[RMDB]
Conditions: 150 mM KOAc, 10 mM MgCl2 and 150 mM bicine (pH 8.5), 24 C. This 177-nucleotide RNA was probed chemically with DMS and 2A3. For DMS, 707 sequencing reads were counted. 2A3 adducts were read by reverse transcription with SuperScript II with manganese. It was measured as part of the RMDB library M2PK90.
RNA sequence: GGGAACGACUCGAGUAGAGUCGAAAAGGAAAUAAUGCACAUAAUCCAGUCGCAGACGCUAAAAAUAACGCUGCGUCGCGACGGAUGUGGCAACGCACACCGAAGUGCAAACGGUAGGGUAAAAAAACUUCGUAAAUCUGUUCGCAGAUUUACGAAGAAAAGAAACAACAACAACAAC
Reactivity to DMS in 0.01 (KOAc 150mM, MgCl2 10mM, bicine 150mM(pH8.5), 24C), signal-to-noise 1, nucleotides 027 to 126: g010g000a100a060a070u030a110a090u010g010c000a030c010a070u010a190a100u010c040c010a120g050u000c000g000c020a030g060a010c010g000c000u030a010a060a120a040a110u000a050a080c200g030c060u010g010c000g000u000c020g000c050g000a000c010g010g020a040u000g000u000g000g000c020a080a020c120g000c050a020c010a050c010c040g030a080a090g010u000g000c060a080a020a030c140g010g010u000a060g000g000g000u000a000a000a040a030a030a070a050
Reactivity to 2A3 in 0.01 (KOAc 150mM, MgCl2 10mM, bicine 150mM(pH8.5), 24C), signal-to-noise 2, nucleotides 027 to 126: g080g020a060a090a030u210a080a120u110g060c040a030c020a290u270a280a060u090c010c000a050g010u030c000g000c090a080g010a010c000g010c020u110a150a040a090a040a080u180a200a100c110g050c110u030g030c040g000u020c000g020c000g000a000c000g010g000a020u000g000u000g000g000c040a010a070c050g000c010a010c000a000c000c120g070a100a030g000u030g000c000a050a040a000c020g000g010u020a050g130g000g020u060a010a060a000a020a040a050a060